[RMDB]
RNA sequence: GGGAACGACUCGAGUAGAGUCGAAAAGGGAGAGCCGAGCAGAGGCAUAGCGAACUGCGCACGGGGAAGCCUUGAGGGAAAGCCGUAGGACCCGGGUUCGAUUCCCGGCUGCUCCACCGAAGGGCCAGCUGGGAUCGGAUUUCGAUCCGAUCCCAGCAAAAGAAACAACAACAACAAC
Reactivity to DMS in 0.01 (KOAc 150mM, MgCl2 10mM, bicine 150mM(pH8.5), 24C), signal-to-noise 2, nucleotides 027 to 126: g000g000g020a050g020a090g000c050c010g040a080g020c050a090g030a110g040g000c020a130u060a120g000c030g030a080a090c100u000g030c020g030c000a140c050g130g010g000g010a090a080g000c010c010u000u000g000a170g060g000g000a050a120a190g000c020c050g000u020a120g080g000a100c160c020c000g000g000g050u000u010c110g000a210u000u060c000c000c000g000g000c050u000g000c010u000c030c030a070c160c160g000a300a070g000g010g000c130c170a060
Reactivity to 2A3 in 0.01 (KOAc 150mM, MgCl2 10mM, bicine 150mM(pH8.5), 24C), signal-to-noise 1, nucleotides 027 to 126: g000g040g020a150g020a060g000c010c060g010a020g020c060a010g060a040g090g000c060a070u040a030g080c040g060a080a080c010u060g060c030g000c020a040c080g000g000g000g070a040a040g010c000c000u020u050g020a090g000g020g000a000a130a050g050c050c040g030u070a090g050g060a070c030c030c000g000g000g010u040u060c030g010a020u090u080c000c000c000g000g000c020u050g000c000u020c000c040a100c000c010g040a020a060g020g020g020c030c020a010
Structure probing data (DMS and 2A3) for a 177-nucleotide construct. For DMS the reverse transcriptase was MarathonRT.